[RMDB]
RNA sequence: GGGAACGACUCGAGUAGAGUCGAAAAACGUGUGAACGAGUACUCGAGAGAGAUCGUGUGUGAUCGAACUCACGUGUUCGUUCACUCACGUGAGAUCUCACGUACUCUCUCGAACGAGUUCUCGAACGUGUUCGUGUACACUCGAACGAGAUCACACCGUCACUAUCUGCUUCGGCAGAUAGUGACGAAAAGAAACAACAACAACAAC
Reactivity to 2A3 in 0.01 (KOAc 150mM, MgCl2 10mM, bicine 150mM(pH8.5), 24C), signal-to-noise 2, nucleotides 027 to 156: a000c060g020u020g000u010g070a110a110c130g010a010g000u010a010c030u060c130g000a000g000a000g000a020g010a070u050c020g000u000g000u000g010u030g000a020u060c020g000a010a010c040u140c230a110c210g120u240g010u030u010c010g000u000u010c010a010c000u000c000a000c020g010u000g030a080g020a100u000c010u000c020a020c040g000u000a010c000u000c000u000c010u000c000g000a010a010c000g000a000g000u190u000c000u020c030g010a060a010c110g150u100g140u170u020c040g010u000g050u060a070c040a000c080u000c000g000a010a000c000g010a000g010a050u020c000a000c000a000c020